[RMDB]
Conditions: 150 mM KOAc, 10 mM MgCl2 and 150 mM bicine (pH 8.5), 24 C. Structure probing data (2A3 and DMS) for a 207-nucleotide construct. Reactivities are given for positions 27 through 156.
RNA sequence: GGGAACGACUCGAGUAGAGUCGAAAAGGGGUCGUCCCGAUGGUAGUAUAGGACAUGGCUAUGGGAGGCUGAAGCCUCCACGGCCUUUAUAGCCAACAGCCUAUACGAGAGUAGGGACGACGGAGGCACCCAAAAGAAGAUUCUUCGGAAUCUUCAACAAUAUUAUUAGCUUCGGCUAAUAAUAUUGAAAAGAAACAACAACAACAAC
Reactivity to 2A3 in 0.01 (KOAc 150mM, MgCl2 10mM, bicine 150mM(pH8.5), 24C), signal-to-noise 1, nucleotides 027 to 156: g300g010g000g000u000c000g000u020c010c000c010g010a030u040g030g010u010a030g000u020a000u000a010g010g040a160c190a300u250g030g000c020u010a010u010g190g140g010a010g000g010c000u020g000a040a020g020c000c000u000c010c010a000c000g000g000c010c000u000u010u010a000u000a000g000c000c000a070a060c140a260g010c000c000u020a000u000a000c000g000a010g000a010g000u050a040g000g000g010a000c010g000a000c000g000g000a000g000g000c020a060c020c000c000a010a110a010a030g010a010a000g000a000u030u000c020u100u160c300g060g000a030a000u000c000u020u010c000a000a000
Reactivity to DMS in 0.01 (KOAc 150mM, MgCl2 10mM, bicine 150mM(pH8.5), 24C), signal-to-noise 2, nucleotides 027 to 156: g020g000g050g060u000c000g000u030c000c010c030g000a190u010g020g010u000a180g000u000a030u000a010g020g000a090c020a250u000g020g020c000u010a020u000g020g000g010a010g020g020c080u000g010a040a140g030c040c030u000c000c010a180c090g010g020c030c000u000u010u000a000u000a000g040c000c020a140a190c030a150g020c000c010u030a010u000a030c000g010a300g000a110g000u000a300g010g040g020a040c000g010a030c060g020g030a040g030g000c050a180c000c010c000a080a030a100a110g000a030a010g010a030u000u000c010u000u010c300g040g000a060a020u000c000u000u000c000a050a180